RNA sequence: GGGAACGACUCGAGUAGAGUCGAAAACUCGAAUCUUUCGAGAUUCGAGACUCUCGAAGUGUCAAUAAGAUCGAAAAGAUCGCCGAGCAUAUAAUAGACACAAUGCUGCUUGAUUCGUCAAGCAGAAGCAUAUAACACAGUUCGCUGUGUUAUAUGCAAAAGAAACAACAACAACAAC
Reactivity to 2A3 in 0.01 (KOAc 150mM, MgCl2 10mM, bicine 150mM(pH8.5), 24C), signal-to-noise 9, nucleotides 027 to 126: c000u000c000g000a000a010u000c010u030u110u160c210g100a020g000a020u000u000c000g010a000g010a010c020u010c000u000c040g080a300a060g000u010g000u020c020a040a070u110a190a060g010a010u010c010g060a100a170a120a160g010a010u010c010g000c030c030g100a070g050c090a040u120a010u080a300a140u120a120g010a000c000a000c000a020a080u150g020c000u010g000c000u010u010g010a020u050u050c200g050u010c100a000a000g000c000a000g000a000a010
Reactivity to DMS in 0.01 (KOAc 150mM, MgCl2 10mM, bicine 150mM(pH8.5), 24C), signal-to-noise 7, nucleotides 027 to 126: c000u010c000g000a010a010u000c000u000u000u010c140g010a010g010a020u000u010c000g000a020g000a080c120u000c000u000c020g010a120a100g030u000g010u000c010a110a090u000a080a110g010a000u000c010g000a110a080a110a170g000a010u000c000g010c200c090g000a090g010c150a080u000a060u010a070a090u010a100g000a020c020a010c030a120a080u010g000c000u000g000c000u000u000g010a030u000u010c210g020u000c000a010a010g000c010a000g010a040a110
Source: RMDB library M2PK50, as collected in RNAgym.
An RNA of 177 nucleotides, treated with 2A3 and DMS and read out base by base.
DMS adducts were read by reverse transcription with MarathonRT.
The reactions ran in a buffer of 150 mM KOAc, 10 mM MgCl2 and 150 mM bicine (pH 8.5), at 24 C.